RNA sequence: GGGAACGACUCGAGUAGAGUCGAAAAGAUAUGGACGUGAACUACUCGAGGCGGACAGCGAAGAACAGUUAUAGGAUCGGAAACGAUCCUAUAACUGGGAGCUGUGCCAUCGAGCACGUCCUAAGUCGUCCGAAAGUAAGUUCGCUUACUUUCGGACAAAAGAAACAACAACAACAAC
Reactivity to DMS in 0.01 (KOAc 150mM, MgCl2 10mM, bicine 150mM(pH8.5), 24C), signal-to-noise 1, nucleotides 027 to 126: g000a090u000a300u010g000g000a010c010g020u000g000a060a040c060u030a300c000u000c000g000a030g000g040c070g000g010a120c060a030g010c000g020a190a160g020a190a160c010a010g010u000u000a000u010a010g010g010a020u000c000g000g000a100a120a110c000g020a010u000c000c000u000a030u000a000a000c010u000g010g000g010a160g000c000u000g010u010g030c000c000a220u000c000g010a000g010c000a010c000g000u000c000c000u000a010a040g000u000c060
Reactivity to 2A3 in 0.01 (KOAc 150mM, MgCl2 10mM, bicine 150mM(pH8.5), 24C), signal-to-noise 1, nucleotides 027 to 126: g080a040u130a130u220g020g000a000c010g000u030g030a060a090c080u180a100c000u300c000g020a010g020g040c010g000g130a080c000a010g060c030g140a300a130g090a300a120c010a010g000u000u000a000u020a010g000g000a010u010c030g000g000a100a070a000c040g000a000u010c000c030u010a010u000a000a000c000u000g000g030g000a010g010c010u050g020u030g010c000c020a300u020c010g000a000g000c030a000c000g010u000c000c000u010a010a000g040u000c040
Chemical mapping of a 177-nucleotide RNA with DMS and 2A3. Reactivities are rounded to 0.1 and cut off at 0 and 3. For DMS the reverse transcriptase was MarathonRT. The DMS profile rests on 932 reads. Values cover nucleotides 27 to 126. The RNA was probed in 150 mM KOAc, 10 mM MgCl2 and 150 mM bicine (pH 8.5) at 24 C. Source: RMDB library TTRINS, as collected in RNAgym. The 2A3 profile rests on 1,621 reads.